RNA sequence: GGGAACGACUCGAGUAGAGUCGAAAAUUAAAAACCAGUCUUGAGAAGUCGAAUCAGGCAAUAGAGGAAAUCAGACUUGCAAAUAAGGAGACCAUACUAGCAGUACAGGGCGUCCAGGAUUAUAUCAUCCAUACGUUUAAUUCGUUAAACGUAUGGAAAAAGAAACAACAACAACAAC
Reactivity to DMS in 0.01 (KOAc 150mM, MgCl2 10mM, bicine 150mM(pH8.5), 24C), signal-to-noise 6, nucleotides 027 to 126: u000u020a070a090a060a110a140c050c030a090g000u000c030u010u010g000a110g000a090a110g000u010c050g000a080a090u000c060a060g010g010c070a070a090u000a060g000a080g010g000a050a060a100u000c050a040g000a070c060u000u000g010c090a050a070a070u010a060a060g010g000a090g010a080c100c050a060u010a060c090u000a050g000c050a060g010u000a050c100a070g010g000g000c050g010u010c040c040a040g000g010a070u010u000a070u010a140u010c120a100
Reactivity to 2A3 in 0.01 (KOAc 150mM, MgCl2 10mM, bicine 150mM(pH8.5), 24C), signal-to-noise 3, nucleotides 027 to 126: u010u010a030a000a000a000a070c020c010a010g050u010c030u050u150g030a130g020a140a030g060u090c070g030a030a080u100c030a030g060g000c020a010a050u050a160g070a030g050g050a060a070a010u070c020a020g060a100c010u000u050g010c060a040a090a200u120a120a080g080g000a030g030a020c020c000a020u030a090c020u030a040g050c020a010g010u060a050c020a030g020g050g000c000g030u000c020c000a030g060g010a020u110u070a080u120a030u160c050a030